[RMDB]
The data come from the RNA Mapping Database (RMDB), library OK3TST. An RNA of 207 nucleotides, treated with 2A3 and read out base by base. Conditions: 150 mM KOAc, 10 mM MgCl2 and 150 mM bicine (pH 8.5), 24 C. Values are in units of 0.01, from 0 to 300, in steps of 10.

RNA sequence: GGGAACGACUCGAGUAGAGUCGAAAAGGGCCCACAACUUGCAAUGUUGAUGGCAUUGCCCCUCAGUCUGAUGAGUAUUCUAACAAAGUGUUCUCUGUUAAAGCAUCAAAUUUUGCUUCUAUGAUGAACCGCUUGUCGACUGCGCCUGCGAUAGGACCGUUGCCAGAGUAUUCGUACUCUGGCAACGAAAAGAAACAACAACAACAAC
Reactivity to 2A3 in 0.01 (KOAc 150mM, MgCl2 10mM, bicine 150mM(pH8.5), 24C), signal-to-noise 1, nucleotides 027 to 156: g040g010g000c010c000c030a060c000a010a050c000u180u300g080c070a020a050u200g000u000u150g080a300u000g050g000c230a190u010u220g010c000c000c000c000u010c000a030g010u000c040u270g000a000u000g000a040g050u000a110u090u230c140u180a230a110c100a120a030a000g130u300g010u170u000c040u000c000u010g140u190u200a070a000a000g000c000a000u020c220a060a300a300u000u110u100u050g000c000u010u000c060u090a060u130g050a020u160g000a050a000c010c000g000c010u000u000g030u000c010g000a040c000u000g000c030g000c000c000u020g000c030g080a100u100a100g040g020a050c000